This 177-nucleotide RNA was probed chemically with DMS and 2A3.
[RMDB]
RNA sequence: GGGAACGACUCGAGUAGAGUCGAAAAGCUCUAGGAGACUAGAGCGAUACGUUAGAGAGCAAAUGGCAUGACUAACGGAUAGCCAGGUACGAGGUUGCCAGAGGACAUAGCUAUAGCUAUGUCCAAAGAGCUAUCUUACCUUCGGGUAAGAUAGCUCAAAAGAAACAACAACAACAAC
Reactivity to DMS in 0.01 (KOAc 150mM, MgCl2 10mM, bicine 150mM(pH8.5), 24C), signal-to-noise 2, nucleotides 027 to 126: g020c000u040c000u000a000g000g030a210g050a240c000u030a000g000a020g010c000g000a030u000a030c020g000u000u020a070g000a140g020a160g000c020a060a080a100u110g000g000c000a060u070g000a140c000u000a000a000c010g000g000a050u030a080g000c020c040a080g010g020u000a030c140g000a100g000g000u000u000g000c000c020a090g000a300g000g000a000c000a000u000a000g000c000u000a060u050a080g000c000u000a000u000g030u000c000c000a000a030a050
Reactivity to 2A3 in 0.01 (KOAc 150mM, MgCl2 10mM, bicine 150mM(pH8.5), 24C), signal-to-noise 2, nucleotides 027 to 126: g000c000u010c000u020a030g000g080a080g040a050c000u000a000g000a000g000c000g000a020u010a010c010g000u000u020a010g010a010g000a000g060c060a020a140a110u060g090g030c000a030u080g000a120c010u060a040a010c040g010g010a030u020a060g120c000c010a030g030g040u110a070c030g110a030g030g110u000u000g010c050c000a040g030a140g160g000a000c000a000u000a000g000c010u080a000u120a300g020c010u020a030u030g000u020c000c000a000a000a000
2A3 adducts were read by reverse transcription with SuperScript II with manganese.
The 2A3 profile rests on 928 reads.
The DMS profile rests on 2,596 reads.
For DMS the reverse transcriptase was MarathonRT.